[RMDB]
RNA sequence: GGGAACGACUCGAGUAGAGUCGAAAAGUGCAAGGCGGGCCAUAAUUUAUGAAACUGAGCUCCAGUCUCAGCCAAUCACUUAGCUUCCCAUAACAAGUCUAACUGGCUCAGAAGAGCUAGCUGUGCCACUAGGCAUUGUAUUCGUACAAUGCCUAGUAAAAGAAACAACAACAACAAC
Reactivity to DMS in 0.01 (KOAc 150mM, MgCl2 10mM, bicine 150mM(pH8.5), 24C), signal-to-noise 9, nucleotides 027 to 126: g030u000g010c110a100a260g000g020c030g010g000g000c300c050a080u010a070a060u030u020u040a080u010g010a120a080a070c060u000g000a070g000c080u020c130c110a050g010u010c020u000c010a090g000c020c020a050a300u010c010a020c020u010u000a100g010c170u000u000c000c010c000a110u040a080a060c170a080a070g000u010c060u000a080a110c080u000g000g000c000u000c010a070g020a120a090g020a020g010c020u000a010g000c040u010g000u000g010c060c100
Reactivity to 2A3 in 0.01 (KOAc 150mM, MgCl2 10mM, bicine 150mM(pH8.5), 24C), signal-to-noise 9, nucleotides 027 to 126: g020u020g010c040a030a120g010g010c020g010g010g020c020c010a080u110a210a150u170u200u190a160u110g110a090a060a040c030u030g010a020g030c020u030c050c030a030g050u030c010u010c030a010g000c020c000a010a040u060c000a000c010u020u030a010g060c020u020u010c000c000c000a010u040a030a040c080a050a020g050u030c010u060a030a050c030u060g010g000c000u000c020a140g070a300a030g010a060g020c010u030a010g000c030u040g030u060g060c010c010